[RMDB]
Chemical mapping of a 177-nucleotide RNA with 2A3 and DMS. Conditions: 150 mM KOAc, 10 mM MgCl2 and 150 mM bicine (pH 8.5), 24 C. 2A3 adducts were read by reverse transcription with SuperScript II with manganese.

RNA sequence: GGGAACGACUCGAGUAGAGUCGAAAAGCUCAAGCGUACCGCCGAAGUCGUGUCAUUGCAGCAUGAGGGCCAACGCCCGCUGUGAUGGGUAGGGGAGCGUCGUCUGCCGGGUGAAGCAGCCGCGGAACCUCAACUAGCUCUUCGGAGCUAGUUGAGGAAAAGAAACAACAACAACAAC
Reactivity to 2A3 in 0.01 (KOAc 150mM, MgCl2 10mM, bicine 150mM(pH8.5), 24C), signal-to-noise 1, nucleotides 027 to 126: g060c000u030c080a020a000g050c040g050u080a040c000c060g020c020c020g060a060a020g020u040c030g010u010g060u090c010a030u000u060g000c010a000g000c030a050u270g160a300g030g010g000c010c050a110a050c120g030c000c000c000g000c000u050g010u010g020a020u010g030g000g050u120a090g070g030g000g030a010g010c040g070u090c040g030u000c050u050g020c010c000g040g050g040u090g000a020a010g020c030a010g000c010c040g060c020g020g070a070a040
Reactivity to DMS in 0.01 (KOAc 150mM, MgCl2 10mM, bicine 150mM(pH8.5), 24C), signal-to-noise 3, nucleotides 027 to 126: g020c000u010c040a110a090g010c050g010u000a100c050c020g010c040c020g020a070a050g010u010c050g010u000g010u010c020a020u000u000g020c010a030g020c020a200u010g020a170g010g000g030c000c050a100a200c280g020c000c010c010g010c040u000g010u000g010a030u000g000g000g020u010a080g000g000g000g000a150g010c030g010u000c040g010u010c030u000g010c040c020g010g000g050u000g000a120a150g000c050a070g000c080c030g030c080g010g000a150a130